[RMDB]
Description: The record gives the reactivity of an RNA of 177 nucleotides to DMS and 2A3. The 2A3 profile rests on 22,735 reads. For DMS the reverse transcriptase was MarathonRT. The data come from the RNA Mapping Database (RMDB), library TTRDEL. The DMS profile rests on 10,195 reads.
RNA sequence: GGGAACGACUCGAGUAGAGUCGAAAAGAUAUGGAGUAUCCACGAACUCGAAGAACUCGGAAACGAGGGAGAGUGAGUGGAGUACUCCUAAGUCAAACAAGCAAAGAUGUUCGCAUCUUUGCUUGAAGAGAUAAUGAAUGUUCGCAUUCAUUAUCUCAAAAGAAACAACAACAACAAC
Reactivity to DMS in 0.01 (KOAc 150mM, MgCl2 10mM, bicine 150mM(pH8.5), 24C), signal-to-noise 7, nucleotides 027 to 126: g010a040u000a300u010g000g010a020g020u000a040u000c000c000a010c000g010a270a030c000u000c000g000a130a170g000a140a190c010u000c000g010g000a130a110a210c000g010a020g000g000g000a050g000a020g020u000g000a280g000u000g000g000a010g010u010a010c000u000c000c010u010a020a070g000u000c040a080a100a300c010a000a000g000c010a000a010a000g000a010u000g010u000u020c210g020c010a000u000c000u000u000u000g010c000u000u000g000a050a080
Reactivity to 2A3 in 0.01 (KOAc 150mM, MgCl2 10mM, bicine 150mM(pH8.5), 24C), signal-to-noise 5, nucleotides 027 to 126: g030a010u070a040u140g000g000a010g000u000a010u010c000c000a010c010g010a020a010c010u010c030g120a300a060g010a060a020c010u000c010g020g030a070a060a040c010g000a010g000g030g000a050g000a000g010u030g010a000g000u010g010g000a000g000u000a000c000u000c000c000u010a060a010g010u010c030a050a040a140c000a020a000g000c010a000a010a000g010a010u010g020u110u190c300g030c150a000u000c000u000u000u000g000c010u000u000g000a000a010